[RMDB]
RNA sequence: GGGAACGACUCGAGUAGAGUCGAAAACCCUCUGCCCGGAUUUGUCUGUGGAUCCGGAGCCGAAAGGCGCGCGGAGGGUCAUGAAACACGGAAUCGUGCGCAUUCUAGUCUGUGGGAUGCGUGCUAAAUUAAAGCAGAAUCGCCAUGUCGUCAUCCUAUCAUCGUGUUAGUUCGCUAACACGAUGAUAAAAGAAACAACAACAACAAC
Reactivity to 2A3 in 0.01 (KOAc 150mM, MgCl2 10mM, bicine 150mM(pH8.5), 24C), signal-to-noise 2, nucleotides 027 to 156: c010c010c000u000c000u000g020c000c000c010g020g000a010u000u000u020g020u020c010u020g000u030g000g000a000u010c000c000g000g000a000g000c000c000g080a050a010a010g010g010c000g000c010g010c000g080g020a000g010g000g000u010c000a060u200g030a090a060a010c010a000c000g010g040a040a000u030c020g000u010g000c000g000c000a000u010u000c010u050a040g100u000c000u030g010u040g000g000g000a010u010g000c010g000u010g000c000u000a010a020a060u270u160a150a090a000g010c000a000g000a060a060u090c040g010c090c040a090u140g020u040c020g010u020c030a070u070c020c000u010